RNA sequence: GGGAACGACUCGAGUAGAGUCGAAAAGGGGUCGUAAUUUCCCAUUACUCCCCACCGCUGUGAACUACUUCUGAAGCCUCCACGGAAGCACAGCGAGGUAAUGAACAAUUACGACGGAGGCACCCAAAACACUGUGGAAGUUCGCUUCCACAGUGAAGCGUUAAGUACACUUCGGUGUACUUAACGCAAAAGAAACAACAACAACAAC
Reactivity to 2A3 in 0.01 (KOAc 150mM, MgCl2 10mM, bicine 150mM(pH8.5), 24C), signal-to-noise 2, nucleotides 027 to 156: g060g010g000g010u000c020g010u010a010a020u020u030u150c010c010c000a000u050u050a030c070u110c030c060c010c040a040c070c030g010c000u000g000u030g010a120a070c080u210a090c000u300u000c010u010g050a120a010g030c000c000u020c000c000a020c030g010g000a000a000g000c000a000c000a000g000c000g020a020g050g000u030a030a030u050g040a060a010c030a040a060u020u020a020c050g020a000c020g020g020a010g000g040c000a050c000c000c000a000a190a000a030c020a000c030u020g000u000g000g000a000a000g000u030u110c230g060c110u000u000c010c000a000c000a000g050u050g010a020a000